[RMDB]
Description: The record gives the reactivity of an RNA of 177 nucleotides to DMS. The DMS profile rests on 1,356 reads. The data come from the RNA Mapping Database (RMDB), library TTRDES.

RNA sequence: GGGAACGACUCGAGUAGAGUCGAAAAGAUAUGGAGCAGGUUAUCUCGAUAAGCUGACCCUCGGAAACGAGGGUUCAGCUUUUGACGAGAUUUCUGCUCCUAAGUCAAACUGAAGGUUCGCCUUCAGCAGCUCUCUAGAGUUCGCUCUAGAGAGCUGAAAAGAAACAACAACAACAAC
Reactivity to DMS in 0.01 (KOAc 150mM, MgCl2 10mM, bicine 150mM(pH8.5), 24C), signal-to-noise 2, nucleotides 027 to 126: g010a010u000a300u020g020g010a010g030c000a010g000g000u010u010a020u000c000u000c000g000a120u000a010a030g010c000u010g000a090c020c000c000u010c010g000g020a120a100a160c010g000a010g010g000g000u000u000c000a010g010c000u000u000u000u010g010a210c150g000a010g000a000u000u000u000c000u000g000c010u000c000c000u000a000a080g000u000c020a100a140a300c000u000g000a000a020g020g010u000u010c300g010c010c000u020u000c010a020g000